[RMDB]
RNA sequence: GGGAACGACUCGAGUAGAGUCGAAAAGAUAUGGACAUCUAGUGCGAAGAACAAAGAGACAGGAUUGAGUACUCGGAAACGAGUACUCUCGAUUCUCUUUGGGAGCACAGGAUGUCCUAAGUCAAAAUCCUUUCGGUGCUUCGGCACCGAAAGGAAAUCAAGUCUAAUCUUUCGAGAUUAGACUUGAAAAAGAAACAACAACAACAAC
Reactivity to DMS in 0.01 (KOAc 150mM, MgCl2 10mM, bicine 150mM(pH8.5), 24C), signal-to-noise 1, nucleotides 027 to 156: g020a020u000a020u010g000g010a050c000a000u020c000u000a280g060u000g020c000g020a110a260g000a120a300c020a020a010a050g010a030g010a070c220a040g030g010a090u010u000g030a020g030u000a010c010u000c000g000g000a010a050a060c010g020a000g010u000a000c030u000c000u000c000g000a080u000u000c000u000c010u010u000u000g010g000g000a070g020c020a010c010a300g000g020a020u000g010u000c010c020u000a000a080g000u010c020a060a050a120a140u000c010c030u010u000u010c020g000g030u000g030c000u000u000c300g030g010c000a010c000c010g000a000a000a000g030g000a010a020a020
Reactivity to 2A3 in 0.01 (KOAc 150mM, MgCl2 10mM, bicine 150mM(pH8.5), 24C), signal-to-noise 4, nucleotides 027 to 156: g000a000u020a000u020g010g000a000c010a010u010c000u080a240g000u020g000c060g260a300a010g000a000a000c000a000a000a000g010a000g030a010c150a240g240g040a090u100u100g000a020g000u000a000c000u000c000g000g000a020a000a000c000g000a000g010u000a010c010u000c010u000c000g070a100u250u020c000u000c000u000u000u000g000g000g020a010g010c000a010c030a010g010g010a000u000g000u000c000c000u000a000a000g000u000c000a000a000a020a270u050c010c000u000u010u000c000g000g010u000g000c000u050u100c260g140g000c000a000c000c000g000a000a000a000g000g000a000a010a000
Chemical mapping of a 207-nucleotide RNA with DMS and 2A3. For DMS, 2,614 sequencing reads were counted. Reactivities are rounded to 0.1 and cut off at 0 and 3. 2A3 adducts were read by reverse transcription with SuperScript II with manganese. The RNA was probed in 150 mM KOAc, 10 mM MgCl2 and 150 mM bicine (pH 8.5) at 24 C. For DMS the reverse transcriptase was MarathonRT.